[RMDB]
RNA sequence: GGGAACGACUCGAGUAGAGUCGAAAAGCAUCAGUAGGUAAUCCUUACCUAUAUAUUUCUAAUGAUGAAGGAGAUGGCCAUAUCCCUCGGGAUUGAAAAUCAUGAAAAACUGGCUGCAAUGCUGAUAAAAAGUUAGGAAUUUCGAUUCCUAACUUUUAAAAGAAACAACAACAACAAC
Reactivity to DMS in 0.01 (KOAc 150mM, MgCl2 10mM, bicine 150mM(pH8.5), 24C), signal-to-noise 8, nucleotides 027 to 126: g010c040a010u010c040a100g010u000a020g000g010u000a020a080u050c210c130u020u000a020c010c000u010a030u000a110u020a090u020u010u010c040u020a100a100u020g020a060u010g010a090a060g010g000a110g000a080u010g010g000c070c020a040u010a110u000c010c000c030u010c150g020g000g000a030u010u000g000a060a090a080a070u020c030a050u010g000a080a080a020a120a100c100u000g010g010c030u000g000c090a050a040u010g010c020u000g010a110u030a050
Reactivity to 2A3 in 0.01 (KOAc 150mM, MgCl2 10mM, bicine 150mM(pH8.5), 24C), signal-to-noise 7, nucleotides 027 to 126: g030c010a010u150c010a030g050u030a020g000g030u040a080a060u210c050c030u070u020a030c000c020u030a010u010a010u010a020u110u150u040c070u080a180a120u110g070a050u080g060a070a020g050g030a090g020a040u080g080g130c000c000a030u040a040u100c000c000c010u010c080g040g000g010a030u050u080g040a060a050a020a050u080c060a060u120g080a030a030a020a030a070c070u040g030g000c000u010g010c020a030a030u070g040c000u010g000a010u110a070